The data come from the RNA Mapping Database (RMDB), library M2RFPK. Structure probing data (2A3) for a 207-nucleotide construct. Values cover nucleotides 27 to 156.
RNA sequence: GGGAACGACUCGAGUAGAGUCGAAAAACCAAGUCUGGGGGCCGAUGAGGGUUGGCUCAAAGUAGGGUUUUGACUUGGAAACUCAAGCUGUGACCCCAAAACGAUGGAGGUAAAUGAGAAUCCUCCUAAAACUAUGGACACUUCGGUGUCCAUAGAACAUUACGCGUACGUUCGCGUACGCGUAAUGAAAAGAAACAACAACAACAAC
Reactivity to 2A3 in 0.01 (KOAc 150mM, MgCl2 10mM, bicine 150mM(pH8.5), 24C), signal-to-noise 2, nucleotides 027 to 156: a000c010c000a030a000g080u000c030u100g010g100g000g000g080c010c010g020a050u180g130a160g070g060g000u050u040g030g010c000u040c050a050a060a030g150u040a050g000g030g000u000u050u020u110g080a060c030u040u050g030g090a030a040a020c030u030c030a010a000g000c040u060g070u100g140a160c010c000c000c020a030a060a030a030c070g100a070u130g000g010a000g000g000u040a100a150a190u230g020a100g020a070a080u020c000c000u010c010c000u000a020a040a000a010c000u000a000u000g000g000a010c000a000c010u030u060c220g110g000u000g000u030c000c000a000u000a000g000a000a000